The record gives the reactivity of an RNA of 177 nucleotides to DMS and 2A3. Reactivities are given for positions 27 through 126. The reactions ran in a buffer of 150 mM KOAc, 10 mM MgCl2 and 150 mM bicine (pH 8.5), at 24 C.
[RMDB]
RNA sequence: GGGAACGACUCGAGUAGAGUCGAAAAGUAAAUAAAGCGCACCAUUAUGGAGGUGCGCAACCAGCGUGACCUAGGAACACGCAUCCACGCGUCUCCUAAGACGCGAAAGGUAUUCCAAAUAAAAAAACAGGACUUAUUAGUUCGCUAAUAAGUCCUGAAAAGAAACAACAACAACAAC
Reactivity to DMS in 0.01 (KOAc 150mM, MgCl2 10mM, bicine 150mM(pH8.5), 24C), signal-to-noise 2, nucleotides 027 to 126: g010u000a050a050a080u000a070a100a150g000c000g020c020a000c000c010a120u000u050a170u000g000g020a090g000g020u000g030c010g020c000a010a040c090c070a100g010c000g010u010g010a070c130c060u000a140g000g050a090a140c050a030c000g000c010a080u010c020c070a120c060g020c020g000u000c030u000c230c190u000a130a050g000a000c000g000c000g000a010a060a010g000g000u000a060u000u000c010c020a060a050a060u030a040a010a140a090a070a080a180
Reactivity to 2A3 in 0.01 (KOAc 150mM, MgCl2 10mM, bicine 150mM(pH8.5), 24C), signal-to-noise 2, nucleotides 027 to 126: g020u050a000a050a180u090a070a190a000g020c010g000c000a000c000c010a030u150u100a130u300g180g040a070g020g000u000g030c000g010c000a010a010c010c020a010g000c010g010u000g000a050c030c110u110a090g070g090a070a020c010a000c000g000c010a030u000c030c010a020c040g000c000g020u000c000u060c040c010u070a150a060g000a000c000g010c000g040a080a030a000g010g000u040a070u140u030c020c010a020a130a040u210a080a100a040a020a000a000a010